RNA sequence: GGGAACGACUCGAGUAGAGUCGAAAAGAUAUGGAGUACUCUUCCUAUGAAGGGAGGUUAUAGGAUAACAUAUCGGAAACGAUAUGCUAAUACUAUAACCUCCUGGAGGAAGUGUACUCCUAAGUCAUCUUAUCUAGUAGUUCGCUACUAGAUAAGAAAAAGAAACAACAACAACAAC
Reactivity to 2A3 in 0.01 (KOAc 150mM, MgCl2 10mM, bicine 150mM(pH8.5), 24C), signal-to-noise 4, nucleotides 027 to 126: g020a010u110a070u240g010g000a020g020u000a020c010u000c010u070u100c000c000u300a300u270g040a010a010g010g000g000a000g000g010u000u010a000u000a010g020g000a010u010a060a040c000a000u010a000u010c000g010g000a080a100a000c010g000a000u000a000u010g020c010u030a070a060u170a300c000u000a000u000a000a000c000c000u010c000c010u000g010g000a000g010g000a000a000g000u000g000u000a010c000u000c000c000u000a000a000g000u010c020a050
Reactivity to DMS in 0.01 (KOAc 150mM, MgCl2 10mM, bicine 150mM(pH8.5), 24C), signal-to-noise 6, nucleotides 027 to 126: g010a040u010a300u000g000g000a020g010u010a000c000u000c010u000u000c000c000u000a290u020g010a220a270g000g000g010a010g020g000u000u000a000u010a010g000g000a130u000a070a120c000a000u000a000u010c000g000g000a130a110a280c000g010a000u000a000u000g000c000u000a120a080u010a100c000u000a000u000a000a010c000c000u000c010c000u000g000g000a010g020g010a010a010g000u000g010u000a000c000u000c000c000u000a010a060g020u000c040a140
Structure probing data (2A3 and DMS) for a 177-nucleotide construct. Reactivities are given for positions 27 through 126. The data come from the RNA Mapping Database (RMDB), library TTRINS. The RNA was probed in 150 mM KOAc, 10 mM MgCl2 and 150 mM bicine (pH 8.5) at 24 C.